[RMDB]
RNA sequence: GGGAACGACUCGAGUAGAGUCGAAAACUAUUUAUAGACAGAACAGUGGUUUAGGUCUUUCUAUAUACAACUUUAACAAUGAUACUUGCAGUGGUAUCUAUCAAGAUAGGCAGGCUAUCAUAGAAAGAAGAUGUUUAUUAUUCGUAAUAAGCAUCUUAAAAGAAACAACAACAACAAC
Reactivity to DMS in 0.01 (KOAc 150mM, MgCl2 10mM, bicine 150mM(pH8.5), 24C), signal-to-noise 8, nucleotides 027 to 126: c020u000a060u040u010u000a030u000a040g000a040c060a040g010a030a040c040a120g020u020g010g010u020u020u030a100g010g000u000c010u000u000u000c020u000a020u010a040u030a080c220a070a180c090u020u010u010a080a110c130a070a020u010g000a020u000a020c000u000u010g010c020a170g020u050g020g030u000a000u000c000u000a110u050c250a080a040g000a030u000a030g010g000c020a010g000g000c270u000a010u000c010a020u000a070g000a050a090a060g000
Reactivity to 2A3 in 0.01 (KOAc 150mM, MgCl2 10mM, bicine 150mM(pH8.5), 24C), signal-to-noise 9, nucleotides 027 to 126: c010u020a080u060u100u020a030u010a010g020a010c020a000g030a100a020c020a050g100u110g180g130u120u130u090a070g030g020u000c000u000u020u000c000u010a020u010a010u020a040c080a130a090c080u110u130u150a140a030c070a100a030u030g000a000u000a000c000u000u020g020c020a090g080u130g190g060u080a000u000c000u010a180u130c060a080a030g000a010u010a010g080g000c010a000g010g010c030u010a000u010c010a010u010a030g150a030a120a010g080